[RMDB]
RNA sequence: GGGAACGACUCGAGUAGAGUCGAAAAGAUAUGGAGACGGAUGCUGCUUUCCGACGAAGAAUUCCUCUCAUCGGAAACGAUGAGAGGAAUUCAGAGGAAAGAACUACAGCUGAUGUCUCCUAAGUCAUCUCAUUAGGAACUUCGGUUCCUAAUGAGAAAAAGAAACAACAACAACAAC
Reactivity to DMS in 0.01 (KOAc 150mM, MgCl2 10mM, bicine 150mM(pH8.5), 24C), signal-to-noise 1, nucleotides 027 to 126: g000a040u000a250u010g000g040a000g000a030c000g000g040a140u010g000c010u000g010c030u010u010u000c000c000g000a200c300g000a280a140g000a030a000u010u010c000c000u010c000u000c000a000u020c000g020g020a090a110a110c000g000a000u000g010a010g000a000g000g000a000a000u000u000c000a000g040a300g000g010a050a010a020g000a130a070c060u000a270c010a000g010c010u000g010a300u040g010u000c000u010c000c000u020a010a110g020u000c010a160